[RMDB]
The record gives the reactivity of an RNA of 177 nucleotides to 2A3 and DMS. 2A3 adducts were read by reverse transcription with SuperScript II with manganese. Reactivities are given for positions 27 through 126. The RNA was probed in 150 mM KOAc, 10 mM MgCl2 and 150 mM bicine (pH 8.5) at 24 C.

RNA sequence: GGGAACGACUCGAGUAGAGUCGAAAACUAUUUAUAGACAGAACAGUGGAAAACGUAUAUCGCUAUAAACCUUAAACACCGACUCUUCCAGUCGUACGAUUCCACAUAGGCGAGGCAUAAGCGAAAGACCAUGGGAUCAUUUCGAUGAUCCCAUGGUAAAAGAAACAACAACAACAAC
Reactivity to 2A3 in 0.01 (KOAc 150mM, MgCl2 10mM, bicine 150mM(pH8.5), 24C), signal-to-noise 3, nucleotides 027 to 126: c020u030a150u030u090u000a130u050a010g090a010c040a110g090a090a000c030a090g000u040g120g060a090a150a000a000c000g000u010a030u020a060u150c040g020c030u060a080u040a050a040a040c000c020u030u150a020a090a000c040a040c050c000g030a040c010u020c030u170u000c010c060a010g000u010c010g000u060a010c050g060a030u070u000c020c000a010c030a070u150a000g030g000c130g040a010g000g100c040a070u070a090a000g020c000g070a170a020a000g110
Reactivity to DMS in 0.01 (KOAc 150mM, MgCl2 10mM, bicine 150mM(pH8.5), 24C), signal-to-noise 2, nucleotides 027 to 126: c040u010a100u040u000u000a070u000a060g000a070c030a250g000a070a070c170a160g050u030g000g000a050a040a060a030c050g020u000a060u040a040u020c070g060c030u000a110u010a060a030a080c170c060u020u010a060a070a070c190a070c180c030g010a000c040u000c060u000u000c070c070a090g020u010c000g030u000a000c130g040a210u000u010c000c040a080c050a030u040a080g010g020c090g000a010g000g010c050a010u010a060a110g020c020g010a060a030a040g000